Conditions: 150 mM KOAc, 10 mM MgCl2 and 150 mM bicine (pH 8.5), 24 C. This 177-nucleotide RNA was probed chemically with 2A3 and DMS. It was measured as part of the RMDB library OK2TST.

RNA sequence: GGGAACGACUCGAGUAGAGUCGAAAAGCGGCCACCGCAGGUGUCGCAGGGUAUCGGAACCGAAUCGCCGUUGGUGCCCUUGCCCUGGCACCGGUCGCACAACACCGCGGUAUCGACGGUGACCUGCCAUCGCUAUCUUCUUCGGAAGAUAGCGAUGAAAAGAAACAACAACAACAAC
Reactivity to 2A3 in 0.01 (KOAc 150mM, MgCl2 10mM, bicine 150mM(pH8.5), 24C), signal-to-noise 2, nucleotides 027 to 126: g010c000g020g020c020c020a120c120c140g060c180a060g000g000u010g020u050c130g070c240a020g000g000g010u030a030u070c010g030g000a020a010c010c020g000a090a080u230c090g050c110c020g080u030u070g010g000u010g010c000c000c000u000u030g010c010c020c000u000g000g000c000a010c010c030g000g000u000c000g020c000a050c000a070a040c010a000c000c010g000c070g050g030u220a200u300c080g140a230c000g090g010u020g020a010c000c010u030g080c040
Reactivity to DMS in 0.01 (KOAc 150mM, MgCl2 10mM, bicine 150mM(pH8.5), 24C), signal-to-noise 2, nucleotides 027 to 126: g000c000g010g010c000c020a100c150c260g040c270a150g010g000u000g010u000c050g020c060a010g010g000g020u010a020u010c280g000g000a060a020c010c010g000a020a070u020c090g000c140c180g040u000u000g010g010u000g000c000c010c060u000u000g010c000c000c010u010g000g000c000a010c010c000g000g020u000c020g000c030a070c230a040a090c050a040c030c000g010c010g000g010u010a080u010c040g010a070c010g000g010u000g010a080c020c010u000g010c110